[RMDB]
RNA sequence: GGGAACGACUCGAGUAGAGUCGAAAAUAAAAGAUCACAACAAGUAUACGUUGAAAAGUAUACAAUAGUACGAUAAGCGCAAGAUCAACUUGCGUGAUAUGGCGCAACAUAUCAAACAACAAAAAAACAGUUACGUCUACUUCGGUAGACGUAACUGAAAAGAAACAACAACAACAAC
Reactivity to 2A3 in 0.01 (KOAc 150mM, MgCl2 10mM, bicine 150mM(pH8.5), 24C), signal-to-noise 1, nucleotides 027 to 126: u090a000a080a030a040g110a070u090c070a050c030a190a000c000a090a080g000u020a000u000a020c040g050u050u050g290a080a080a050a050g010u020a000u010a030c060a060a080u160a040g060u090a040c050g050a110u060a190a070g000c020g000c020a000a010g010a060u170c070a070a300c000u000u000g030c000g010u010g010a000u010a000u020g090g000c150g010c030a010a070c020a010u010a000u050c050a080a020a020c030a000a000c000a010a080a080a000a000a000a000